[RMDB]
RNA sequence: GGGAACGACUCGAGUAGAGUCGAAAAAUCGCGGGUGAUCGACAUCGUCGAAGAGAACGGGUUCUCAGUCGACGACCGCGACGACCUGUAUCCCGCGGCCGGCGUGCAGGUCCAUGACGCCGACACCUGUCACACUGUCUUUCGAGACAGUGUGACAAAAAGAAACAACAACAACAAC
Reactivity to DMS in 0.01 (KOAc 150mM, MgCl2 10mM, bicine 150mM(pH8.5), 24C), signal-to-noise 2, nucleotides 027 to 126: a100u000c050g030c020g010g000g010u000g010a100u000c000g010a050c100a290u000c030g010u010c040g000a070a140g010a010g010a030a100c120g000g010g020u010u000c000u000c000a190g030u000c000g000a010c000g000a030c120c110g000c060g000a040c030g000a040c020c020u000g010u000a210u020c080c000c010g010c120g000g000c040c010g000g000c040g030u010g030c070a030g010g000u010c180c070a090u000g000a060c060g040c010c030g000a010c030a060c100c040
Reactivity to 2A3 in 0.01 (KOAc 150mM, MgCl2 10mM, bicine 150mM(pH8.5), 24C), signal-to-noise 1, nucleotides 027 to 126: a000u090c030g010c000g000g000g000u050g040a300u010c040g070a030c020a050u010c020g000u020c000g000a080a010g030a000g030a050a070c190g210g020g100u080u000c010u000c040a010g140u020c020g000a010c000g080a070c010c060g000c070g010a010c050g060a010c010c000u010g030u040a080u090c000c020c000g050c040g070g040c080c020g020g000c030g000u140g200c040a040g030g060u010c060c020a080u110g030a020c020g040c000c000g010a020c030a010c000c000
An RNA of 177 nucleotides, treated with DMS and 2A3 and read out base by base. The RNA was probed in 150 mM KOAc, 10 mM MgCl2 and 150 mM bicine (pH 8.5) at 24 C. For DMS, 1,539 sequencing reads were counted.